This 207-nucleotide RNA was probed chemically with DMS and 2A3. The 2A3 profile rests on 1,659 reads.
[RMDB]
RNA sequence: GGGAACGACUCGAGUAGAGUCGAAAAUCAGAAUCAGGCCGGAGUGUUUAGCGCUCCGUAAACACGGUCGUACAUCCAGCCGGUAGCCUGGGUCCUUGCAUUGAGUGAUGUACGGAGUUUAUAGAGCAAAAGAAAGACCUGUUCGCAGGUCUUUCAAGAUACGCAACAUGUUCGCAUGUUGCGUAUCAAAAGAAACAACAACAACAAC
Reactivity to DMS in 0.01 (KOAc 150mM, MgCl2 10mM, bicine 150mM(pH8.5), 24C), signal-to-noise 1, nucleotides 027 to 156: u010c040a090g010a080a110u000c040a040g000g010c040c060g000g030a100g000u010g000u000u020u000a150g000c080g000c000u010c010c030g050u000a010a040a020c060a150c080g010g040u000c010g020u010a060c010a040u000c030c030a180g020c000c070g080g000u010a070g030c080c020u010g010g010g010u000c020c010u000u000g010c070a150u000u000g000a170g030u000g020a040u030g010u010a030c040g000g010a160g000u000u000u000a050u000a090g000a090g010c050a130a100a070a210g000a000a010a030g010a020c000c000u000g010u000u000c300g010c010a050g000g000u010c010u000u030u000c010a050a050
Reactivity to 2A3 in 0.01 (KOAc 150mM, MgCl2 10mM, bicine 150mM(pH8.5), 24C), signal-to-noise 3, nucleotides 027 to 156: u060c010a010g110a020a050u050c000a000g000g000c000c000g030g010a010g010u090g020u130u180u120a140g130c020g000c000u000c000c000g000u030a000a010a010c050a010c050g030g040u080c020g010u050a030c010a030u010c020c030a010g030c000c010g000g000u010a020g010c010c010u010g010g000g030u030c000c010u030u060g020c030a090u040u110g130a070g080u120g060a010u000g000u000a020c000g060g010a060g000u070u120u020a170u100a070g070a020g040c090a060a050a060a010g000a010a000a000g000a000c000c000u010g010u050u050c210g030c100a000g000g000u020c000u000u000u000c000a000a000
It was measured as part of the RMDB library M2RFOK. 2A3 adducts were read by reverse transcription with SuperScript II with manganese. The reactions ran in a buffer of 150 mM KOAc, 10 mM MgCl2 and 150 mM bicine (pH 8.5), at 24 C.